[RMDB]
RNA sequence: GGGAACGACUCGAGUAGAGUCGAAAAGAUAUGGAUCACAGGGAGCUGGUGGUCGGAAACGACCACGACCAGCAUCGAUCUGUAUCCUAAGUCAAAAUCCGCAUCCCAGUUCGCUGGGAUGCGGAAAGGUAUUCUUCUGGUUCGCCAGAAGAAUACCAAAAGAAACAACAACAACAAC
Reactivity to DMS in 0.01 (KOAc 150mM, MgCl2 10mM, bicine 150mM(pH8.5), 24C), signal-to-noise 1, nucleotides 027 to 126: g000a050u000a250u000g010g010a020u000c060a070c050a120g000g000g010a080g030c010u010g010g010u000g010g060u000c020g000g000a040a050a140c010g000a000c020c010a120c160g000a090c150c000a010g030c000a160u010c090g000a050u000c000u000g010u000a030u000c000c020u010a050a090g030u020c060a040a100a100a090u000c010c000g000c000a010u000c000c000c000a000g020u000u020c190g010c000u000g000g020g020a010u000g020c000g000g000a010a000a050